[RMDB]
RNA sequence: GGGAACGACUCGAGUAGAGUCGAAAAAGUAACGAGACAAGCCGUCAGGCCCUUCUUGAGUCACGCGCAUCGGUGAGGAGAUGCCUCGCAUGAAGGCGCUUCAGGCAACCGACGGGUCCAGGGCAGGUAUACCAAAUGUCUUCGGACAUUUGGUAUAAAAAGAAACAACAACAACAAC
Reactivity to DMS in 0.01 (KOAc 150mM, MgCl2 10mM, bicine 150mM(pH8.5), 24C), signal-to-noise 7, nucleotides 027 to 126: a100g020u010a080a080c090g000a110g000a100c110a100a110g010c010c010g000u040c100a300g010g010c020c000c010u000u010c010u010u000g010a300g010u020c020a090c300g000c030g010c010a050u010c000g010g000u010g010a040g000g000a300g000a130u050g010c010c010u000c020g000c050a030u030g020a020a090g000g010c020g030c010u010u030c130a080g010g000c030a040a140c190c130g000a050c060g000g000g010u000c010c040a220g020g000g010c010a060g010g010
Reactivity to 2A3 in 0.01 (KOAc 150mM, MgCl2 10mM, bicine 150mM(pH8.5), 24C), signal-to-noise 4, nucleotides 027 to 126: a000g200u150a110a040c120g040a020g030a120c070a140a020g050c030c010g080u100c070a050g010g020c000c000c010u040u070c020u040u090g050a040g020u040c040a020c100g000c000g010c010a020u010c020g010g020u050g010a010g000g030a200g020a120u200g260c000c000u010c010g020c030a070u210g040a080a100g050g000c000g000c000u030u040c040a060g020g000c010a030a030c020c020g030a020c040g000g000g010u000c010c040a050g010g030g000c040a020g060g020
Background: This 177-nucleotide RNA was probed chemically with DMS and 2A3. High DMS reactivity at an A or C suggests that its Watson-Crick edge is free. For DMS, 14,121 sequencing reads were counted. It was measured as part of the RMDB library OK1LIB. The RNA was probed in 150 mM KOAc, 10 mM MgCl2 and 150 mM bicine (pH 8.5) at 24 C.